This 207-nucleotide RNA was probed chemically with DMS and 2A3. The DMS profile rests on 2,454 reads. Reactivities are rounded to 0.1 and cut off at 0 and 3. It was measured as part of the RMDB library OK3TST. The RNA was probed in 150 mM KOAc, 10 mM MgCl2 and 150 mM bicine (pH 8.5) at 24 C. DMS adducts were read by reverse transcription with MarathonRT. In probing experiments dimethyl sulfate is read out at A N1 and C N3, which are open when not base-paired. 2A3 adducts were read by reverse transcription with SuperScript II with manganese.
RNA sequence: GGGAACGACUCGAGUAGAGUCGAAAAAAAGCGGUGGUAGGCCCCGGUGUUGAUUGUGUAGGAGCAGUUGGCCAUGACUGACCAGUUGACUGUCUGGUGCCCAGGGCGCACGAGCUCGGUGUACUUGAGGCGCGAGUAUGCGCGGGUGUCAAAGAUGUCUAGCUAAAUCAUUCGUGAUUUAGCUAGAAAAAGAAACAACAACAACAAC
Reactivity to DMS in 0.01 (KOAc 150mM, MgCl2 10mM, bicine 150mM(pH8.5), 24C), signal-to-noise 1, nucleotides 027 to 156: a030a120a110g030c080g000g030u000g000g030u000a080g000g020c020c010c020c040g000g020u000g010u020u020g000a110u000u000g040u000g030u000a100g040g020a120g030c030a100g010u000u000g020g010c020c030a070u010g030a230c120u020g000a040c000c010a090g030u010u020g000a080c030u020g010u000c010u000g020g000u000g070c010c010c010a200g010g020g030c050g000c060a080c040g020a100g000c030u000c010g030g040u000g020u000a030c070u020u000g000a110g030g050c060g010c030g030a090g030u010a050u000g000c050g000c030g000g000g000u010g020u010c030a010a070a090g000a130u020g010
Reactivity to 2A3 in 0.01 (KOAc 150mM, MgCl2 10mM, bicine 150mM(pH8.5), 24C), signal-to-noise 1, nucleotides 027 to 156: a000a030a020g060c120g000g000u010g030g000u050a040g030g020c000c000c020c040g040g080u040g000u030u080g050a240u050u070g040u040g070u140a060g020g060a040g000c030a030g020u030u010g030g000c070c020a080u090g060a070c080u060g000a030c030c010a050g030u030u030g070a080c090u060g000u070c010u030g040g000u040g000c060c030c060a080g070g070g040c110g000c030a040c070g080a010g030c000u040c040g000g040u060g040u030a110c060u020u160g020a100g070g030c020g000c020g040a010g030u080a010u100g010c130g000c040g000g010g020u080g050u040c030a020a090a090g130a030u140g020